An RNA of 207 nucleotides, treated with 2A3 and read out base by base. Values cover nucleotides 27 to 156. The 2A3 profile rests on 1,447 reads. It was measured as part of the RMDB library OK3TST. The RNA was probed in 150 mM KOAc, 10 mM MgCl2 and 150 mM bicine (pH 8.5) at 24 C.
[RMDB]
RNA sequence: GGGAACGACUCGAGUAGAGUCGAAAAUUAGCCAGGAACUUUCUGGAGAGCAGGAGCUGAGCUGUCCAGGAGCAGGAGCUGGUGCUGGUCACUCCAGUAUCCCCCAGACUGAGGGCAGUGCCAGGUGUCCUAUACUCAGCUGCAGAGCAGGUGGUUCUCAAUAUACAAUCUUCGGAUUGUAUAUUGAAAAAGAAACAACAACAACAAC
Reactivity to 2A3 in 0.01 (KOAc 150mM, MgCl2 10mM, bicine 150mM(pH8.5), 24C), signal-to-noise 1, nucleotides 027 to 156: u110u050a040g030c030c010a040g060g050a120a130c030u030u100u010c010u110g030g000a070g010a010g060c040a050g040g050a000g000c050u020g010a000g000c030u030g120u200c040c010a050g010g060a020g000c050a010g000g030a020g080c010u000g000g000u020g020c000u030g020g120u100c060a110c280u030c060c010a010g020u050a240u220c040c020c010c000c000a020g000a050c010u020g010a050g030g000g000c000a000g000u000g030c000c000a020g040g040u050g090u020c000c000u020a030u040a050c030u000c000a050g000c010u000g030c030a030g030a010g040c020a010g000g100u070g020g000u130u000c030